Chemical mapping of a 177-nucleotide RNA with 2A3. Reactivities are rounded to 0.1 and cut off at 0 and 3. Conditions: 150 mM KOAc, 10 mM MgCl2 and 150 mM bicine (pH 8.5), 24 C.
RNA sequence: GGGAACGACUCGAGUAGAGUCGAAAACGCCUGCUAAUGAAUCAUUUUCGUUCAUUACCGCGCCUCUUGUCUCCUGAAAAGUAAAAACACCCGCGUAUUGGCAACGUAGUCCGAUGUUUUUGCUGUUACGGCACAUUGAUUUCGAUCAAUGUGCCGUAAAAGAAACAACAACAACAAC
Reactivity to 2A3 in 0.01 (KOAc 150mM, MgCl2 10mM, bicine 150mM(pH8.5), 24C), signal-to-noise 1, nucleotides 027 to 126: c020g050c050c000u060g000c030u070a020a040u000g010a070a030u090c070a100u080u200u130u170c100g030u000u000c000a000u000u020a050c030c010g030c030g000c000c010u010c000u040u080g020u100c010u010c080c000u030g010a110a080a000a000g050u070a010a010a010a010a010c010a040c000c030c010g050c010g020u050a170u180u140g070g000c060a090a020c030g090u030a050g020u000c000c040g010a010u010g070u000u000u000u000u050g060c030u020g030u070u010
As a SHAPE reagent, 2A3 marks flexible, mostly unpaired nucleotides at the ribose 2'-OH. Values cover nucleotides 27 to 126. For 2A3 the reverse transcriptase was SuperScript II with manganese.